[RMDB]
RNA sequence: GGGAACGACUCGAGUAGAGUCGAAAAUGCAAUUAGUUCGCUAAUUGCACAUGUCUAGUCGCUAGAAAACGAUCAAAACUAGCGACUACACUUUAUUGAUCGGGGGCCUGGCUUUCGAGCCAGGCAACAUAGAUUCGCAAUUCGUUGCGAAUCUAUGAAAAGAAACAACAACAACAAC
Reactivity to DMS in 0.01 (KOAc 150mM, MgCl2 10mM, bicine 150mM(pH8.5), 24C), signal-to-noise 5, nucleotides 027 to 126: u010g000c000a010a010u000u000a000g000u000u020c240g020c000u000a000a000u000u000g000c000a010c080a070u010g010u000c040u000a010g010u000c000g000c000u000a000g000a050a020a030a090c020g020a020u000c010a040a100a170a170c000u000a000g000c000g000a000c000u000a010c180a080c210u000u010u000a070u010u000g000a000u000c010g000g000g000g000g010c000c000u000g010g010c000u000u000u010c160g000a010g020c000c000a000g000g000c010a010a010
Reactivity to 2A3 in 0.01 (KOAc 150mM, MgCl2 10mM, bicine 150mM(pH8.5), 24C), signal-to-noise 6, nucleotides 027 to 126: u040g000c000a000a000u000u000a010g030u030u040c150g010c120u010a010a010u000u010g070c000a010c010a040u110g020u020c010u010a000g000u010c000g010c000u000a010g040a110a200a030a060c080g020a040u030c020a010a040a000a050c000u000a000g010c020g000a000c000u010a000c000a000c000u250u300u190a200u080u090g020a020u030c010g000g000g020g030g000c000c000u000g000g010c000u060u060u100c180g030a000g000c010c000a000g000g010c000a000a000